[RMDB]
RNA sequence: GGGAACGACUCGAGUAGAGUCGAAAAUAACGUUUCGACGUUAGACGCUGGGGUCUAUGCCCUCAAGAGGGACAUGGACUGAAGCCUCCACGGUCCAACAGCCUACCCACCUUGAGGGCAUAGACGGAGGCACCCGAUGUGACGCUUUCGAGCGUAAUACUCUUAUCUUGUUCGCAAGAUAAGAGUAAAAAGAAACAACAACAACAAC
Reactivity to 2A3 in 0.01 (KOAc 150mM, MgCl2 10mM, bicine 150mM(pH8.5), 24C), signal-to-noise 3, nucleotides 027 to 156: u050a020a000c000g010u020u110u110c260g100a050c000g000u010u010a070g030a060c190g010c050u040g000g090g000g000u000c000u000a010u000g010c000c030c000u010c000a020a020g040a100g080g010g020a130c090a180u180g020g010a100c010u000g040a060a000g010c000c000u110c100c040a110c050g040g000u030c040c000a090a050c030a170g060c010c030u100a090c070c020c010a170c040c050u040u000g000a020g020g000g000c000a000u000a000g000a000c030g000g000a000g000g010c000a020c000c000c010g000a030u140g080u140g110a020c010g010c040u090u190u210c300g140a010g010c000g000u020a040a020
Reactivity to DMS in 0.01 (KOAc 150mM, MgCl2 10mM, bicine 150mM(pH8.5), 24C), signal-to-noise 2, nucleotides 027 to 156: u000a010a050c040g020u000u010u000c090g030a150c020g020u000u000a030g000a120c120g010c030u000g020g000g030g020u010c020u000a010u000g000c000c000c000u000c010a040a070g020a300g010g020g000a070c080a140u000g010g010a020c020u010g020a170a100g000c010c010u010c050c100a250c160g000g000u010c010c030a080a110c040a100g000c040c010u030a170c070c000c050a140c080c010u000u000g000a070g020g010g000c010a010u000a010g010a070c000g000g000a300g010g020c010a050c010c020c010g010a150u000g000u010g000a070c040g000c010u000u000u000c170g010a070g010c010g030u010a070a190